[RMDB]
RNA sequence: GGGAACGACUCGAGUAGAGUCGAAAACAGUGAAAGGCGAGGUCAGCGUCAGCAGCCCGCCGCUGAACGCAGGACAACGCCAAAGGUCGGCGGGGAAAGAUACAGGCUGAAGAUACAGCCAGUACAACCAUCGCGACUAGUUCGCUAGUCGCGAUGGAAAAGAAACAACAACAACAAC
Reactivity to DMS in 0.01 (KOAc 150mM, MgCl2 10mM, bicine 150mM(pH8.5), 24C), signal-to-noise 1, nucleotides 027 to 126: c050a170g000u110g000a020a020a150g010g030c000g000a210g020g000u000c000a130g000c000g030u000c070a020g000c060a080g050c020c080c070g000c000c000g000c000u000g000a050a020c000g000c000a140g010g000a050c130a050a020c050g000c000c000a000a120a200g050g000u000c180g060g000c060g000g000g000g000a000a040a070g000a300u000a010c070a150g010g000c030u000g000a090a180g000a170u020a050c050a000g000c020c000a050g000u010a050c130a010a120
Reactivity to 2A3 in 0.01 (KOAc 150mM, MgCl2 10mM, bicine 150mM(pH8.5), 24C), signal-to-noise 1, nucleotides 027 to 126: c050a020g030u030g300a020a100a000g020g000c020g100a070g160g130u060c000a000g000c000g000u000c010a000g020c000a020g030c000c000c000g000c000c000g020c000u000g000a000a000c000g000c010a000g010g080a050c020a300a100c190g000c000c000a000a000a100g060g040u090c090g000g070c000g000g000g000g000a010a010a000g030a000u000a000c010a020g000g020c000u000g040a080a000g000a060u050a000c000a000g030c000c000a000g000u000a000c030a010a010